Source: RMDB library OK3TST, as collected in RNAgym. The record gives the reactivity of an RNA of 207 nucleotides to 2A3. The RNA was probed in 150 mM KOAc, 10 mM MgCl2 and 150 mM bicine (pH 8.5) at 24 C. Values cover nucleotides 27 to 156.
RNA sequence: GGGAACGACUCGAGUAGAGUCGAAAACUCGAGGAGCAUAGAGGCGUGCGAACUCGACAUGAAUCAGCCUCAAUUAGAAGGUACUCGUGAGAGCGAAGUACCGAGAAUUGGUCGACGAUCACCGGCGAUCUUUCGACCUUGAAUUAAGCCGGCAAAAAGUACUAUUAGUGUUCGCACUAAUAGUACUAAAAGAAACAACAACAACAAC
Reactivity to 2A3 in 0.01 (KOAc 150mM, MgCl2 10mM, bicine 150mM(pH8.5), 24C), signal-to-noise 1, nucleotides 027 to 156: c030u000c000g000a000g000g000a130g050c000a000u040a040g000a020g000g000c000g000u010g000c030g020a140a040c000u000c040g070a070c120a170u300g060a160a150u150c120a030g020c010c000u040c040a000a020u160u080a010g130a170a010g020g000u000a000c000u000c000g020u030g080a040g010a030g050c000g040a190a010g040u000a000c010c010g000a020g000a000a100u200u170g000g000u030c050g000a040c040g000a020u000c000a030c100c020g000g000c000g000a030u010c000u020u100u030c000g010a030c000c000u020u110g010a000a000u070u060a060a070g000c010c000g000g000c040a090a040a000a000